[RMDB]
RNA sequence: GGGAACGACUCGAGUAGAGUCGAAAAGAUAUGGAGGAGCGAUGAGUAAGAACUACAAGGUCUAUCGGAAACGAUAGUCUUGCUUACGAGCUCCUCCUAAGUCAAAACCUGGAGUUCGCUCCAGGAAGAACGGAAAAGAGUUCGCUCUUUUCCGUUCAAAAGAAACAACAACAACAAC
Reactivity to DMS in 0.01 (KOAc 150mM, MgCl2 10mM, bicine 150mM(pH8.5), 24C), signal-to-noise 4, nucleotides 027 to 126: g010a040u010a300u000g010g000a020g010g010a000g030c000g030a110u030g040a280g000u000a030a020g020a090a060c130u010a300c010a010a000g010g000u010c000u000a000u000c000g000g000a130a100a200c000g010a020u000a000g000u000c000u000u000g000c000u000u000a010c000g010a130g000c000u000c000c000u000c000c000u000a010a070g000u000c030a150a080a130a140c010c000u000g000g000a030g010u000u020c220g020c000u010c000c000a010g000g010a030a060
Reactivity to 2A3 in 0.01 (KOAc 150mM, MgCl2 10mM, bicine 150mM(pH8.5), 24C), signal-to-noise 3, nucleotides 027 to 126: g010a000u060a030u130g000g010a000g020g000a000g010c060g230a300u180g060a170g080u040a040a030g010a140a060c180u230a050c300a050a000g000g080u150c020u020a010u000c000g010g000a080a040a060c000g000a000u000a010g000u000c010u000u000g000c000u030u010a000c020g010a020g000c000u000c000c000u000c000c000u010a010a000g000u000c010a000a000a040a080c000c000u010g000g000a000g010u130u210c300g070c170u000c000c000a000g000g000a000a050